[RMDB]
The record gives the reactivity of an RNA of 177 nucleotides to 2A3 and DMS. DMS adducts were read by reverse transcription with MarathonRT. The DMS profile rests on 6,834 reads. 2A3 adducts were read by reverse transcription with SuperScript II with manganese. For 2A3, 5,832 sequencing reads were counted.
RNA sequence: GGGAACGACUCGAGUAGAGUCGAAAACAGAAGAAGUGUCUGAGUGUCUUUAUCAAAUUAUAAAAGAAUAUCAUGGCAUUGUAAGUACUUCUUUCAAUAGCUUGAUGCAGAUAGACCCCAAUAAUGGCAAGUAGUAUCGAUUCGUCGAUACUACUUGAAAAGAAACAACAACAACAAC
Reactivity to 2A3 in 0.01 (KOAc 150mM, MgCl2 10mM, bicine 150mM(pH8.5), 24C), signal-to-noise 6, nucleotides 027 to 126: c030a020g040a020a000g010a050a010g030u020g030u060c010u020g070a060g130u010g030u000c020u060u150u040a080u060c010a040a070a190u300u180a200u250a190a100a030a020g090a080a030u060a030u150c040a030u110g010g000c000a000u010u060g060u190a030a010g010u010a030c020u010u010c000u000u050u030c050a100a080u080a040g020c000u000u120g060a040u180g050c020a000g030a070u080a060g090a070c010c010c010c040a040a080u240a120a060u090g130g030
Reactivity to DMS in 0.01 (KOAc 150mM, MgCl2 10mM, bicine 150mM(pH8.5), 24C), signal-to-noise 6, nucleotides 027 to 126: c090a150g000a040a030g010a070a040g010u000g000u010c010u010g000a090g020u000g010u000c000u000u000u000a040u000c030a050a080a090u010u010a150u010a080a060a090a130g000a080a050u000a040u010c080a050u000g000g000c020a020u010u010g000u010a060a050g020u000a040c100u000u000c000u000u000u000c090a040a070u010a090g010c040u010u000g010a090u010g020c080a080g000a080u000a090g010a160c080c010c010c060a060a090u030a050a100u010g010g000